This 177-nucleotide RNA was probed chemically with DMS and 2A3. Source: RMDB library M2PK50, as collected in RNAgym. For 2A3 the reverse transcriptase was SuperScript II with manganese. The RNA was probed in 150 mM KOAc, 10 mM MgCl2 and 150 mM bicine (pH 8.5) at 24 C. Reactivities are given for positions 27 through 126. For DMS the reverse transcriptase was MarathonRT.
RNA sequence: GGGAACGACUCGAGUAGAGUCGAAAAGUAUUUACCUUCGGGUAAAUACAAAUAAAGCCGGAAUAUAGUACAUGCAAAAACCGGCAAUAAAGCAUGUACAAAAAAUCAUCACCUUCGGGUGAUGAAACAUACCCAUAGUGUUCGCACUAUGGGUAUGAAAAGAAACAACAACAACAAC
Reactivity to DMS in 0.01 (KOAc 150mM, MgCl2 10mM, bicine 150mM(pH8.5), 24C), signal-to-noise 1, nucleotides 027 to 126: g010u000a010u010u000u040a000c000c000u010u030c200g010g000g020u000a020a010a000u000a000c020a130a090a060u000a080a100a070g000c000c010g000g000a220a070u000a060u010a060g010u000a000c000a020u010g000c000a100a060a040a290a050c020c030g000g000c000a070a010u000a050a190a140g000c000a000u000g010u000a010c010a020a020a100a090a020a180u000c000a020u000c000a000c000c010u010u000c130g020g000g010u030g000a000u000g010a000a050a140
Reactivity to 2A3 in 0.01 (KOAc 150mM, MgCl2 10mM, bicine 150mM(pH8.5), 24C), signal-to-noise 2, nucleotides 027 to 126: g000u000a000u020u010u000a010c000c000u040u030c140g030g000g020u000a000a000a000u000a000c000a010a090a010u100a020a020a010g030c030c000g020g070a100a050u300a030u030a110g010u010a010c010a010u010g000c010a060a080a030a090a300c010c000g000g030c020a030a060u080a010a020a000g000c000a000u000g000u020a000c010a000a090a000a020a030a030u020c000a010u000c010a000c000c000u030u060c210g090g000g000u010g010a000u000g000a000a000a000